[RMDB]
RNA sequence: GGGAACGACUCGAGUAGAGUCGAAAAGUGCACGACUUCGGUCGUGCACAAAUAAAGGCAGUCGAGUGCGUACGGCACAGUCAUACGCUGACGCCAGGACAAAAAGUAACGUCUUCGGACGUUACAAUCAACACCGUUACUUCGGUAACGGUGUUGAAAAAGAAACAACAACAACAAC
Reactivity to 2A3 in 0.01 (KOAc 150mM, MgCl2 10mM, bicine 150mM(pH8.5), 24C), signal-to-noise 1, nucleotides 027 to 126: g000u000g000c000a000c020g010a000c070u090u150c290g010g000u000c000g010u000g020c000a010c000a000a000a000u000a000a000a010g040g000c110a030g010u000c000g140a090g220u150g080c000g020u020a050c040g000g020c020a020c040a300g010u040c020a020u030a050c010g040c020u070g000a000c010g000c000c000a000g110g130a030c110a050a150a000a010a010g000u000a000a000c000g020u000c000u040u100c150g090g000a000c000g000u000u000a000c000a000a030
Reactivity to DMS in 0.01 (KOAc 150mM, MgCl2 10mM, bicine 150mM(pH8.5), 24C), signal-to-noise 1, nucleotides 027 to 126: g010u000g000c000a010c010g040a020c010u030u000c210g060g000u000c030g010u000g000c000a000c000a000a050a030u000a020a080a170g010g010c010a060g020u010c070g000a090g020u010g000c000g010u000a010c130g010g030c020a080c240a070g000u020c030a080u000a020c060g010c020u020g000a030c030g000c010c000a060g030g010a080c170a050a030a080a080a040g000u010a000a000c000g000u000c000u010u000c080g010g000a010c000g000u000u000a000c010a090a070